[RMDB]
Description:
Structure probing data (DMS and 2A3) for a 207-nucleotide construct. DMS (dimethyl sulfate) methylates the pairing face of unpaired adenines and cytosines. For DMS the reverse transcriptase was MarathonRT. For 2A3 the reverse transcriptase was SuperScript II with manganese. The RNA was probed in 150 mM KOAc, 10 mM MgCl2 and 150 mM bicine (pH 8.5) at 24 C.
RNA sequence: GGGAACGACUCGAGUAGAGUCGAAAACUUCUCGACAGGUCUUGACUGCUUCACGCUUAAGAUCGGCUAAGUCAACCCCUCGGAUUGCUUCAUAUGUCUCUGAUUGAAGCCCAUCGAAUUGUAGAUAUAUCGCAGUAACCCCAGCGUCAGAGAGUCGCCUAACAUGAAACUUCGGUUUCAUGUUAGGAAAAGAAACAACAACAACAAC
Reactivity to DMS in 0.01 (KOAc 150mM, MgCl2 10mM, bicine 150mM(pH8.5), 24C), signal-to-noise 2, nucleotides 027 to 156: c040u000u000c110u000c000g040a150c040a090g020g020u000c020u000u000g030a070c050u000g000c040u000u020c030a110c150g010c030u010u010a040a050g000a090u000c020g020g000c040u000a040a130g010u010c030a070a130c000c000c000c000u010c060g020g000a070u000u010g000c000u000u010c050a050u010a040u000g000u010c050u000c040u010g000a080u010u010g020a080a090g030c060c060c040a130u010c030g020a120a060u010u000g030u010a090g050a090u010a110u010a070u020c000g030c060a080g020u000a050a150c020c010c020c000a100g030c060g010u000c030a060g010a100g010a110g020u000c070g030
Reactivity to 2A3 in 0.01 (KOAc 150mM, MgCl2 10mM, bicine 150mM(pH8.5), 24C), signal-to-noise 3, nucleotides 027 to 156: c010u090u000c020u000c030g050a040c030a080g020g030u040c040u100u050g040a060c040u050g060c040u160u150c090a080c130g060c050u080u080a100a000g000a100u060c030g010g020c020u070a080a020g040u030c030a030a080c000c010c030c020u030c030g060g020a080u010u070g010c000u020u010c030a040u060a040u150g040u020c000u000c010u050g040a050u020u050g020a040a040g020c000c020c030a030u050c030g060a080a070u060u100g030u140a040g020a040u040a000u030a020u120c060g000c070a010g040u030a070a100c030c000c000c010a020g040c020g040u020c030a020g030a010g000a000g090u020c010g030